The record gives the reactivity of an RNA of 177 nucleotides to 2A3 and DMS.
[RMDB]
RNA sequence: GGGAACGACUCGAGUAGAGUCGAAAAGAUAUGGAAUACGGCCCUUGAAGUGACGUAACAUCUGGUCGGAAACGACCAGUGGUCAUGGAGGCGUAUUCCUAAGUCAAAAGUGGUGUUCGCACCACAACCUAACGUCUAGCUUCGGCUAGACGUUAGGAAAAGAAACAACAACAACAAC
Reactivity to 2A3 in 0.01 (KOAc 150mM, MgCl2 10mM, bicine 150mM(pH8.5), 24C), signal-to-noise 2, nucleotides 027 to 126: g020a020u100a040u120g030g000a020a010u000a000c060g300g070c020c020c030u060u100g160a160a020g030u010g040a020c030g030u090a130a010c040a290u120c050u010g010g000u020c010g010g090a070a060a020c000g020a000c000c000a000g010u000g000g030u010c010a010u060g050g010a000g000g040c030g000u000a000u000u000c010c000u020a060a020g070u040c020a010a000a120a110g020u010g030g000u010g030u070u110c260g040c040a000c000c000a000c000a000a020
Reactivity to DMS in 0.01 (KOAc 150mM, MgCl2 10mM, bicine 150mM(pH8.5), 24C), signal-to-noise 2, nucleotides 027 to 126: g000a020u000a300u000g000g010a010a010u000a010c010g000g020c090c000c300u010u020g010a090a170g000u010g000a020c010g050u020a060a090c260a010u020c000u000g000g000u010c000g000g000a080a040a110c010g000a030c000c000a010g030u000g000g000u000c000a000u000g010g000a020g010g000c000g010u000a010u000u000c000c000u020a000a070g010u000c010a040a050a100a130g020u000g000g000u000g010u020u040c200g000c010a000c010c000a000c000a060a170

For 2A3 the reverse transcriptase was SuperScript II with manganese. The RNA was probed in 150 mM KOAc, 10 mM MgCl2 and 150 mM bicine (pH 8.5) at 24 C. Values cover nucleotides 27 to 126. It was measured as part of the RMDB library TTRDEL.